[RMDB]
This 177-nucleotide RNA was probed chemically with 2A3 and DMS.
The 2A3 profile rests on 2,179 reads.
The data come from the RNA Mapping Database (RMDB), libraries RFM100 and RFMREP.
RNA sequence: GGGAACGACUCGAGUAGAGUCGAAAACAAUAACGGGUUCGUCACGCGUGGUAUCCGGAUGGUAAUGGUAAACCGUUCUGCUCAGGUUCAGACUCCGGCAGGCCUGACGGAUACUGAGUCCAAAUGUUAUGGAGGGUUAUUUCGAUAACCCUCCAUAAAAAGAAACAACAACAACAAC
Reactivity to 2A3 in 0.01 (KOAc 150mM, MgCl2 10mM, bicine 150mM(pH8.5), 24C), signal-to-noise 4, nucleotides 027 to 126: c050a020a090u090a180a000c120g040g050g000u070u070c030g010u050c060a020c070g100c070g020u090g010g000u020a010u030c000c000g030g000a040u040g020g010u090a210a120u120g080g130u180a130a070a090c010c010g030u120u040c020u020g000c010u040c180a090g000g000u100u080c020a040g040a110c020u000c010c010g020g000c030a020g000g060c000c000u000g020a000c000g000g010a000u000a020c010u010g000a000g030u000c010c010a040a140a090u260g030u180
Reactivity to DMS in 0.01 (KOAc 150mM, MgCl2 10mM, bicine 150mM(pH8.5), 24C), signal-to-noise 2, nucleotides 027 to 126: c180a140a070u040a120a080c100g000g000g010u000u000c050g000u040c020a090c160g000c050g020u000g010g000u020a010u000c000c000g000g010a100u040g000g020u020a060a090u010g010g000u040a090a150a120c040c010g000u010u000c030u020g020c030u030c110a160g000g000u000u000c110a120g000a120c110u030c010c050g010g000c080a040g000g000c000c000u000g010a300c000g000g010a050u000a020c000u000g000a070g000u000c030c010a120a080a020u040g000u000